[RMDB]
RNA sequence: GGGAACGACUCGAGUAGAGUCGAAAAGAAGAGAAGUGAGUAAACGCCUAUACGGUAUAAGCACAGCCCGUCAAAAGGCGUGCGGCGAGGGCACCAGAAGCUGUGCUUAUAACUGGGCCCUCGAAGACAGCCAUCAUCGUUUCGACGAUGAUGGCUGAAAAGAAACAACAACAACAAC
Reactivity to DMS in 0.01 (KOAc 150mM, MgCl2 10mM, bicine 150mM(pH8.5), 24C), signal-to-noise 2, nucleotides 027 to 126: g030a110a040g000a110g000a050a070g000u010g010a140g000u010a000a170a010c060g030c030c010u020a030u060a030c070g010g010u040a090u020a040a010g030c000a030c030a010g050c000c020c010g000u000c200a070a000a150a060g000g000c000g070u000g000c110g010g000c040g030a020g000g000g000c000a140c050c010a020g000a260a100g000c000u030g000u020g000c010u030u020a060u040a090a100c030u000g000g000g000c000c010c000u000c000g000a070a040g010a170
Reactivity to 2A3 in 0.01 (KOAc 150mM, MgCl2 10mM, bicine 150mM(pH8.5), 24C), signal-to-noise 3, nucleotides 027 to 126: g090a040a000g060a000g070a160a020g060u100g110a030g000u140a040a280a040c020g000c010c010u170a150u050a240c070g030g000u050a100u010a160a000g000c000a000c010a000g010c000c000c010g010u020c040a090a000a000a060g010g000c010g000u010g030c040g040g000c030g000a000g000g030g010c200a250c140c000a000g020a060a000g000c050u050g000u000g000c000u070u080a170u110a080a030c010u000g000g030g000c000c000c000u000c000g000a000a000g030a010

Structure probing data (DMS and 2A3) for a 177-nucleotide construct. The RNA was probed in 150 mM KOAc, 10 mM MgCl2 and 150 mM bicine (pH 8.5) at 24 C. Values cover nucleotides 27 to 126. DMS adducts were read by reverse transcription with MarathonRT. The data come from the RNA Mapping Database (RMDB), library OK1LIB.